[RMDB]
RNA sequence: GGGAACGACUCGAGUAGAGUCGAAAACAGCAAUUAUUCGUAAUUGCUGAAUGGCGGACCCAGCGCGGAAGGAGCGCGCAGGACUCCUUCGCCGCCUUUUAAUAAGCAGGUACUUCGGUACCUGCAAGGAACACAUACUGUUCGCAGUAUGUGUUCCAAAAGAAACAACAACAACAAC
Reactivity to 2A3 in 0.01 (KOAc 150mM, MgCl2 10mM, bicine 150mM(pH8.5), 24C), signal-to-noise 3, nucleotides 027 to 126: c000a000g010c010a010a000u010u010a010u070u120c170g060u060a010a010u000u000g000c000u000g020a020a110u120g010g000c030g020g010a040c020c010c010a040g100c160g000c080g150g020a020a040g020g020a030g000c080g010c020g000c110a040g020g130a130c010u000c010c000u020u020c030g030c020c000g000c000c000u040u190u040u090a230a200u190a110a040g010c010a000g000g000u010a000c000u030u120c220g070g000u000a000c020c000u000g000c000a000a000
Reactivity to DMS in 0.01 (KOAc 150mM, MgCl2 10mM, bicine 150mM(pH8.5), 24C), signal-to-noise 3, nucleotides 027 to 126: c000a020g000c000a010a000u000u000a030u000u000c180g010u010a010a000u000u000g010c000u000g010a040a050u010g030g020c030g000g000a160c020c000c020a120g010c160g020c100g000g010a030a010g000g000a030g000c070g000c220g010c200a090g010g000a180c010u010c030c000u000u000c030g000c010c020g000c010c000u000u020u000u020a080a120u000a110a140g000c010a000g000g020u000a000c000u010u010c170g030g010u000a000c000c000u010g020c000a020a030